[RMDB]
Chemical mapping of a 177-nucleotide RNA with DMS and 2A3. The DMS profile rests on 1,149 reads. Source: RMDB library OK2TRN, as collected in RNAgym. 2A3 adducts were read by reverse transcription with SuperScript II with manganese.
RNA sequence: GGGAACGACUCGAGUAGAGUCGAAAAUCAUUUCACUGAGACGAUCAAACCCGUUCUUGACCUUACUAAUUCCAUAGCAUAUCGGGUGGAAUGAAUAACAUGUUCUUUUGCUCUCUGCAUGGCGAUGAGCUGAACCGGAAUUCGUUCCGGUUCAGCUAAAAGAAACAACAACAACAAC
Reactivity to DMS in 0.01 (KOAc 150mM, MgCl2 10mM, bicine 150mM(pH8.5), 24C), signal-to-noise 2, nucleotides 027 to 126: u010c000a060u010u010u000c010a070c110u000g000a150g020a110c070g000a050u020c080a090a100a130c060c010c040g000u000u000c030u000u000g000a150c080c010u020u000a040c060u030a080a140u000u000c020c010a110u000a060g020c100a070u000a080u010c120g030g000g030u020g000g010a020a020u000g010a040a040u020a120a100c110a050u000g010u000u000c020u000u000u000u000g000c040u000c050u010c040u000g030c000a050u000g000g010c160g040a130u040g020
Reactivity to 2A3 in 0.01 (KOAc 150mM, MgCl2 10mM, bicine 150mM(pH8.5), 24C), signal-to-noise 1, nucleotides 027 to 126: u000c020a010u020u040u050c070a060c070u090g050a030g010a100c030g040a040u050c070a070a020a050c060c000c010g050u060u000c030u060u070g100a090c040c000u110u120a050c040u120a140a090u090u010c010c010a020u040a140g000c000a070u120a080u150c050g070g000g000u030g020g000a010a010u010g010a010a000u150a100a020c080a100u090g020u030u020c000u030u060u050u060g000c000u000c000u030c070u090g020c000a030u030g060g000c090g120a110u160g060